[RMDB]
RNA sequence: GGGAACGACUCGAGUAGAGUCGAAAAUGAGUACAGCACAUGCUUUACUAUUGGAGACAGUUUUCUUAAUUAUGGCUAUGGCAGUUCUUGCAGGCGCAUUAAGCGCACUACUUUCAGAGUUUGGAGUCCCUCCGUGCUCCUUCGGGAGCACGGAGGGAAAAGAAACAACAACAACAAC
Reactivity to 2A3 in 0.01 (KOAc 150mM, MgCl2 10mM, bicine 150mM(pH8.5), 24C), signal-to-noise 1, nucleotides 027 to 126: u090g120a000g000u020a010c040a000g000c000a010c070a090u300g000c020u020u010u000a020c020u020a140u080u000g060g000a000g000a000c060a080g000u000u080u080u180c090u170u110a120a120u000u120a000u240g020g030c010u030a090u130g120g000c120a080g110u140u000c010u090u000g020c010a100g020g000c000g120c010a000u090u090a110a110g020c010g000c000a010c000u090a000c000u000u030u090c170a000g060a000g100u070u110u290g070g020a040g090u000